[RMDB]
RNA sequence: GGGAACGACUCGAGUAGAGUCGAAAAAGCCGAGAGGCCCGUGGAUCAGGUGCGCGACGUCGGUGACGGGCUGCAGCACGAUCUUGGCGCCAUCGAAAGCGCAUCCGCCGGCUGCCGCCCCGGGGAUCAGCGGCUUCGAGCAGCCGUUCUUACGCGCAUUAGCACGUAGGUUCGCCUACGUGCUAAUAAAAGAAACAACAACAACAAC
Reactivity to 2A3 in 0.01 (KOAc 150mM, MgCl2 10mM, bicine 150mM(pH8.5), 24C), signal-to-noise 1, nucleotides 027 to 156: a030g020c010c010g060a030g040a040g020g060c000c000c000g040u030g040g000a070u090c070a030g060g000u010g060c030g010c010g090a030c050g030u110c110g080g100u150g010a050c100g010g090g010c070u090g000c000a010g010c020a050c150g020a040u080c050u110u170g110g000c020g050c010c010a100u160c110g170a190a020a120g010c010g030c030a070u030c030c070g040c060c000g000g000c040u050g030c040c020g010c040c020c000c000g060g000g090g000a140u050c040a000g040c010g010g000c000u010u050c040g030a050g020c030a020g060c000c000g030u060u000c050u150u150a050c050g010c020g000c010